Chemical mapping of a 207-nucleotide RNA with 2A3 and DMS. Values cover nucleotides 27 to 156. For DMS, 4,101 sequencing reads were counted. For DMS the reverse transcriptase was MarathonRT. For 2A3 the reverse transcriptase was SuperScript II with manganese.
[RMDB]
RNA sequence: GGGAACGACUCGAGUAGAGUCGAAAAUUGUGCCACUUGAAUGGAACAGAAGCAAGCCUUAUGUUUUGGAAGGUCUGCGGUAAAAUGCUGUGACUGUUUACUUUCAAUUGCAUUGUGUGUUGCCUGUGACUGCUUUCAAACGCUAGAGGGGGCCUCAUACGAUUACUCAGUUCGCUGAGUAAUCGUAAAAAGAAACAACAACAACAAC
Reactivity to 2A3 in 0.01 (KOAc 150mM, MgCl2 10mM, bicine 150mM(pH8.5), 24C), signal-to-noise 2, nucleotides 027 to 156: u110u080g000u000g000c020c010a050c030u040u050g010a080a000u020g020g000a020a020c010a030g050a100a010g020c000a000a060g000c000c010u040u050a060u110g130u030u120u100u120g020g030a030a020g010g020u030c040u060g040c050g010g040u090a100a130a030a060u100g030c100u040g030u040g120a060c040u010g090u060u100u050a120c000u050u040u050c030a030a070u030u050g050c040a050u080u040g010u010g010u000g040u140u010g020c010c000u050g000u020g060a040c020u000g060c040u030u090u050c040a040a100a060c040g040c030u050a030g010a050g030g030g010g000g000c000c030u060c040a080
Reactivity to DMS in 0.01 (KOAc 150mM, MgCl2 10mM, bicine 150mM(pH8.5), 24C), signal-to-noise 2, nucleotides 027 to 156: u000u010g020u010g010c000c060a020c060u010u000g000a140a090u000g010g020a050a080c020a040g020a120a250g030c020a040a090g010c030c030u020u000a050u010g030u010u000u010u000g020g010a050a070g010g010u000c030u000g030c040g030g010u000a020a030a070a110u000g020c050u000g020u000g000a100c060u000g000u000u010u000a110c010u000u010u010c030a040a060u000u000g020c000a120u010u000g020u000g000u010g030u000u000g020c010c040u030g060u000g000a140c040u020g020c030u000u010u000c040a060a070a140c090g020c070u000a100g010a110g000g010g040g030g020c070c010u000c020a300